[RMDB]
RNA sequence: GGGAACGACUCGAGUAGAGUCGAAAAGUCAUCAAUGAUCCAUGUCAAUAGUGAGUAAUCACAGAUCAUCUCUCAUUGAUUUUAAUAUGUGGUGUGUGAGCUUUACUCUAGUGUGUUUGGAAAGUUUGUAAUUUUUGGAAGCAAUGAAACCACACUACUCCAUUAGGACGUUCGCGUCCUAAUGGAGAAAAGAAACAACAACAACAAC
Reactivity to 2A3 in 0.01 (KOAc 150mM, MgCl2 10mM, bicine 150mM(pH8.5), 24C), signal-to-noise 1, nucleotides 027 to 156: g170u090c000a070u050c050a170a000u130g060a040u030c040c000a070u050g020u160c040a130a070u090a190g030u000g080a030g030u150a030a020u050c050a020c020a070g010a030u030c020a040u000c000u000c000u000c050a060u020u050g050a030u010u190u140u230a160a200u250a060u230g050u080g020g000u020g000u000g000u010g130a040g010c000u050u060u080a030c000u020c000u100a050g000u010g070u050g040u090u080u030g030g100a060a160a140g040u050u140u060g010u130a100a210u020u090u020u090u070g210g000a030a000g060c040a010a070u050g030a080a100a000c000c050a030c000a010c010u030a030